RNA sequence: GGGAACGACUCGAGUAGAGUCGAAAAGUCAUUUCUUUAUGGACCCCAUUCCCAUAAAUUCAGUAUCCAAAGAUGGUUGCUGUAUCUAUGGGAAUAAGGGUUCCAUAACGAAAUGAUCUUGGACGCAGUUAUUAGAACUGUUCGCAGUUCUAAUAACAAAAGAAACAACAACAACAAC
Reactivity to 2A3 in 0.01 (KOAc 150mM, MgCl2 10mM, bicine 150mM(pH8.5), 24C), signal-to-noise 4, nucleotides 027 to 126: g000u000c000a000u000u010u010c000u000u010u010a000u010g000g000a010c000c000c000c000a010u000u000c000c000c000a000u000a000a020a000u010u020c010a000g010u010a020u010c010c010a080a170a180g300a300u170g010g000u010u020g000c000u010g010u020a000u010c010u000a000u000g000g000g000a000a000u010a010a020g000g000g010u070u000c000c000a000u000a010a000c000g000a000a010a010u000g000a010u050c020u010u030g080g030a030c070g000c130a040
Reactivity to DMS in 0.01 (KOAc 150mM, MgCl2 10mM, bicine 150mM(pH8.5), 24C), signal-to-noise 4, nucleotides 027 to 126: g010u000c000a020u000u000u000c000u000u000u000a000u000g000g010a040c020c000c000c080a110u000u000c000c000c000a010u000a000a010a020u000u000c000a000g020u000a020u000c010c000a070a190a180g020a170u000g010g010u000u000g010c000u000g000u000a010u000c040u000a000u000g000g010g010a010a010u000a110a120g000g010g010u010u010c000c000a000u000a010a010c070g000a000a010a010u000g000a010u010c020u000u000g010g000a130c180g010c170a110